[RMDB]
RNA sequence: GGGAACGACUCGAGUAGAGUCGAAAACAACAUGGCCAAAAAUAGGCGCUUUAAGCGACAGAGCAACAGACUUAUGUACUACCUUACACACGAAGAGUGUCACAUUCAAGAAUACUUGUAGGAAUGGUACUGCGUACAGGUUCGCCUGUACGCAGUAAAAAGAAACAACAACAACAAC
Reactivity to 2A3 in 0.01 (KOAc 150mM, MgCl2 10mM, bicine 150mM(pH8.5), 24C), signal-to-noise 2, nucleotides 027 to 126: c010a000a000c030a150u130g110g000c020c020a060a090a000a080a000u110a090g030g000c030g000c020u100u190u140a110a000g000c010g060a030c000a020g100a000g150c030a030a060c010a030g080a120c000u090u120a050u220g080u020a030c010u020a010c010c010u030u120a050c060a000c030a010c050g070a010a100g070a000g090u060g000u040c000a050c010a100u130u110c030a050a020g020a120a070u100a190c030u030u110g050u040a000g020g050a080a060u020g050g040
Reactivity to DMS in 0.01 (KOAc 150mM, MgCl2 10mM, bicine 150mM(pH8.5), 24C), signal-to-noise 1, nucleotides 027 to 126: c040a090a120c040a020u000g000g060c000c010a050a080a070a050a070u030a050g000g010c030g050c020u000u010u010a080a090g020c020g000a070c120a110g000a040g030c060a070a030c140a000g010a070c040u000u020a040u000g000u010a010c150u000a020c090c000u010u010a110c110a110c000a080c080g000a070a020g000a140g090u030g000u000c040a070c100a090u010u000c100a110a060g000a050a110u010a060c020u020u000g000u010a110g020g000a060a090u030g000g020

The record gives the reactivity of an RNA of 177 nucleotides to 2A3 and DMS. The RNA was probed in 150 mM KOAc, 10 mM MgCl2 and 150 mM bicine (pH 8.5) at 24 C. For 2A3, 898 sequencing reads were counted.